[RMDB]
RNA sequence: GGGAACGACUCGAGUAGAGUCGAAAAACACCACUAAUUUUGAACUUCAGGUAGACAGAGGAUGUAGAGUUUUCCUUUGCUCAAGAAAUUCCUUUACAGAGAAAAUGGGAACAUUUCAAGUGGGAGUAUUUCAAUUCCUUUAAUAACAACCUGUUUACGCCUAAUUACCAUUCGUGGUAAUUAGGCGAAAAGAAACAACAACAACAAC
Reactivity to 2A3 in 0.01 (KOAc 150mM, MgCl2 10mM, bicine 150mM(pH8.5), 24C), signal-to-noise 3, nucleotides 027 to 156: a000c050a040c040c020a040c100u100a160a270u070u130u130u180g070a090a050c030u080u080c100a030g010g020u060a060g050a120c030a030g010a020g030g020a010u040g050u170a070g050a100g110u060u010u010u100c000c010u050u070u110g040c030u010c020a050a050g010a000a020a030u010u030c000c000u100u080u110a150c090a010g120a000g070a170a080a060a070u100g010g000g000a030a040c010a070u040u080u110c070a090a050g030u040g000g040g020a080g020u050a160u040u140u130c040a060a080u010u010c000c000u070u070u150a100a070u160a170a030c090a020a010c010c000u030g010u080u060u090a030